[RMDB]
RNA sequence: GGGAACGACUCGAGUAGAGUCGAAAAUCUAUCACCAGCCCAUGUUUACGACACGAAUGGGCUGUUGCAUAUUACGUAUAGCUCUUGCAACAUCGUGUCGAAACGUUCCCAAGCUAUACGCCACAAACUAAGGAGCACAGUUCGCUGUGCUCCUUAGAAAAGAAACAACAACAACAAC
Reactivity to 2A3 in 0.01 (KOAc 150mM, MgCl2 10mM, bicine 150mM(pH8.5), 24C), signal-to-noise 1, nucleotides 027 to 126: u060c010u030a090u080c030a020c060c030a010g000c000c000c030a030u060g030u110u190u030a080c020g000a010c000a000c020g050a110a070u000g080g000g000c020u010g000u010u010g000c010a020u090a040u190u290a090c020g010u010a020u000a000g000c020u030c010u100u160g060c040a070a030c000a050u030c000g000u000g020u010c020g020a140a050a000c010g000u010u020c030c010c000a000a000g010c000u000a010u000a010c010g010c030c000a130c030a010a110a010
Reactivity to DMS in 0.01 (KOAc 150mM, MgCl2 10mM, bicine 150mM(pH8.5), 24C), signal-to-noise 2, nucleotides 027 to 126: u000c060u000a070u010c060a070c050c020a050g010c000c000c010a140u000g000u010u000u000a160c000g010a020c020a020c020g010a090a060u010g000g020g010c050u000g010u000u000g000c090a070u010a090u020u000a160c010g030u000a000u010a000g000c020u000c160u020u000g020c060a030a050c080a080u000c020g010u020g020u000c040g020a050a110a210c020g000u000u030c060c000c000a140a050g000c000u000a020u000a020c000g000c140c150a100c180a010a100a110